[RMDB]
The record gives the reactivity of an RNA of 177 nucleotides to DMS and 2A3. It was measured as part of the RMDB library TTRDES. The reactions ran in a buffer of 150 mM KOAc, 10 mM MgCl2 and 150 mM bicine (pH 8.5), at 24 C.

RNA sequence: GGGAACGACUCGAGUAGAGUCGAAAAGAUAUGGAAUAUGAUCCUGCGAUAAGGUACAUUCGGAAACGAAUGAAUACCUUUUGACGCAGGAUAUUCCUAAGUCAAAAUCAGGGGUUCGCCCCUGAAAGACUAAUCAUACCUUCGGGUAUGAUUAGUCAAAAGAAACAACAACAACAAC
Reactivity to DMS in 0.01 (KOAc 150mM, MgCl2 10mM, bicine 150mM(pH8.5), 24C), signal-to-noise 4, nucleotides 027 to 126: g020a030u010a190u000g000g000a020a010u000a050u010g010a150u010c000c000u010g000c000g020a140u010a010a010g010g010u000a030c010a010u000u000c010g030g000a030a030a060c000g030a010a000u010g000a170a200u000a010c010c000u000u000u010u010g010a230c100g010c000a000g000g010a030u000a000u000u000c000c000u010a030a140g010u000c000a130a100a170a160u010c000a020g010g010g010g030u000u010c300g020c010c000c000c000u000g000a010a060a120
Reactivity to 2A3 in 0.01 (KOAc 150mM, MgCl2 10mM, bicine 150mM(pH8.5), 24C), signal-to-noise 3, nucleotides 027 to 126: g010a000u040a010u080g000g010a020a020u060a080u220g300a170u100c000c000u010g000c010g140a220u060a300a020g000g010u010a010c000a010u010u000c010g000g020a010a020a030c030g020a000a010u000g000a050a030u040a010c000c000u020u020u080u190g170a080c020g000c000a000g000g000a000u000a000u000u000c000c000u010a050a000g010u010c030a030a010a010a300u050c000a000g020g010g040g060u090u110c230g240c010c000c000c000u000g000a010a000a000

About this RNA: 2A3 adducts were read by reverse transcription with SuperScript II with manganese.